[RMDB]
RNA sequence: GGGAACGACUCGAGUAGAGUCGAAAACCAAGAUAUCCUAGAGGUAGCGGAUCGUCAGAAUAACGAUACGCGCCGCACGGCUAAUGGCCGACCGCAAGAGACGAUUAACGUCAAUCUGCGCGCAUAAGGCCCAACAUGGGUUCGCCCAUGUUGGGCCAAAAGAAACAACAACAACAAC
Reactivity to 2A3 in 0.01 (KOAc 150mM, MgCl2 10mM, bicine 150mM(pH8.5), 24C), signal-to-noise 1, nucleotides 027 to 126: c000c000a000a020g150a120u300a140u080c000c000u070a110g000a020g080g000u060a060g000c000g000g000a000u000c000g000u060c110a000g040a290a110u170a050a050c000g000a000u000a000c060g000c000g000c000c000g000c090a000c000g000g020c000u080a200a000u200g170g000c000c000g020a020c000c000g010c000a000a150g000a000g000a000c030g000a110u000u300a300a070c010g000u000c060a000a020u040c000u000g000c020g000c060g000c130a040u170a300a040